[RMDB]
Source information: The data come from the RNA Mapping Database (RMDB), library ARCHII. The record gives the reactivity of an RNA of 207 nucleotides to 2A3 and DMS.
RNA sequence: GGGAACGACUCGAGUAGAGUCGAAAAAGUUGGAUCACGAGGCCCAAAUGAAAAUAUGGGCUUCUUGAUUCCUAAAGUGGGGCGGACCGCAUGAGGCUGGCUUCACAGAGCAGUGAACAGCUCCCGCUCUGUGCAGUGGAAGGAUAAUGGGUCGGUGCAUAACGUUGAAGUUCGCUUCAACGUUAUGAAAAGAAACAACAACAACAAC
Reactivity to 2A3 in 0.01 (KOAc 150mM, MgCl2 10mM, bicine 150mM(pH8.5), 24C), signal-to-noise 3, nucleotides 027 to 156: a000g200u160u090g010g000a000u010c000a000c020g000a010g020g010c000c000c020a030a100a050u250g060a100a090a030a010u220a090u090g000g000g020c000u010u000c000u010u010g000a000u070u080c010c010u070a080a050a050g040u130g010g000g000g010c020g020g000a050c000c040g070c100a060u070g040a050g090g030c030u040g050g000c010u010u030c000a000c000a010g020a000g000c040a030g030u070g230a100a070c040a120g040c050u080c000c010c020g010c000u000c030u010g000u010g000c020a020g000u060g010g070a070a020g030g010a030u060a100a070u140g020g000g010u050c030g010g020u030g020
Reactivity to DMS in 0.01 (KOAc 150mM, MgCl2 10mM, bicine 150mM(pH8.5), 24C), signal-to-noise 2, nucleotides 027 to 156: a060g040u000u010g030g000a050u000c000a030c050g010a020g000g000c000c010c010a020a140a110u000g000a180a070a120a140u010a170u000g030g000g010c000u000u000c010u000u000g010a060u000u010c010c040u000a040a060a090g000u010g010g010g000g000c040g000g010a090c010c030g010c060a110u010g010a120g030g000c020u000g000g010c010u000u000c010a030c000a050g000a030g020c010a030g040u020g010a050a140c190a160g000c020u000c010c020c020g010c010u000c000u000g000u000g020c110a050g020u000g010g000a100a070g050g000a110u000a080a080u000g010g020g000u000c010g000g030u010g020
The reactions ran in a buffer of 150 mM KOAc, 10 mM MgCl2 and 150 mM bicine (pH 8.5), at 24 C.